[RMDB]
RNA sequence: GGGAACGACUCGAGUAGAGUCGAAAAGAUAUGGAGCUAUGACGACUCACCACCGAAGAACUCGGAAACGAGGGAGGUGGUAGGUCGCAAUGUAGCUCCUAAGUCAAAACCCGACUUCGGUCGGGAAUCAUAUCAUUCCGUUCGCGGAAUGAUAUGAAAAAGAAACAACAACAACAAC
Reactivity to 2A3 in 0.01 (KOAc 150mM, MgCl2 10mM, bicine 150mM(pH8.5), 24C), signal-to-noise 3, nucleotides 027 to 126: g020a010u060a050u150g010g000a010g000c010u010a010u070g300a110c020g000a000c000u030c120a000c000c000a010c000c000g170a300a080g000a040a030c000u000c010g030g030a100a050a040c020g010a010g000g000g000a030g000g000u000g000g000u010a010g010g000u000c000g000c000a020a040u070g000u000a010g000c000u000c000c000u000a050a010g010u010c010a020a020a070a200c010c000c000g000a000c010u060u080c300g090g000u000c000g010g010g000a000a040
Reactivity to DMS in 0.01 (KOAc 150mM, MgCl2 10mM, bicine 150mM(pH8.5), 24C), signal-to-noise 4, nucleotides 027 to 126: g000a030u000a300u010g000g000a000g020c020u000a010u000g010a090c020g010a020c010u010c040a010c010c010a000c010c000g020a080a170g000a110a210c010u000c000g010g000a100a050a190c000g000a020g000g010g010a070g000g030u000g000g020u000a010g020g010u000c000g020c070a040a020u000g020u000a010g000c000u000c000c000u010a000a060g000u000c050a140a070a110a160c010c000c010g010a000c000u000u010c190g010g000u000c000g010g000g010a030a010
Overview: An RNA of 177 nucleotides, treated with 2A3 and DMS and read out base by base. Values are in units of 0.01, from 0 to 300, in steps of 10. The reactions ran in a buffer of 150 mM KOAc, 10 mM MgCl2 and 150 mM bicine (pH 8.5), at 24 C. DMS adducts were read by reverse transcription with MarathonRT. The DMS profile rests on 3,799 reads. It was measured as part of the RMDB library TTRDEL.